[RMDB]
RNA sequence: GGGAACGACUCGAGUAGAGUCGAAAAGGUACAACGUUCGCGUUGUACCAAAUAAGGCAACCUUCGUGGUGACGAGAAUAAAUGAGUGCUCGCCCUCAUAAAAAACAAUCCCCUUCGGGGGAUUGAACGAUGCUAAUUACUUCGGUAAUUAGCAUCGAAAAGAAACAACAACAACAAC
Reactivity to DMS in 0.01 (KOAc 150mM, MgCl2 10mM, bicine 150mM(pH8.5), 24C), signal-to-noise 2, nucleotides 027 to 126: g000g000u000a010c000a000a020c020g040u000u010c180g050c000g040u000u000g020u010a000c010c000a000a000a060u010a070a130g020g010c120a100a060c030c010u010u040c120g040u000g020g020u000g000a020c040g000a060g010a060a060u000a050a120a150u000g000a070g000u000g000c000u000c040g000c020c000c010u000c030a110u010a010a040a050a060a080a130c010a000a000u000c010c010c000c000u000u020c170g020g010g000g010g010a000u000u000g000a040a120
Reactivity to 2A3 in 0.01 (KOAc 150mM, MgCl2 10mM, bicine 150mM(pH8.5), 24C), signal-to-noise 2, nucleotides 027 to 126: g000g000u010a000c000a020a000c000g040u060u070c190g000c020g070u020u000g010u000a000c000c010a000a020a000u100a010a010g070g000c040a040a010c010c000u140u120c190g080u130g040g070u070g050a070c020g050a040g020a120a100u170a170a150a080u160g050a040g090u100g030c010u030c060g040c000c030c000u000c000a070u230a020a140a000a020a010a020c000a000a000u000c000c010c010c000u000u020c120g010g000g000g000g000a000u000u000g000a000a000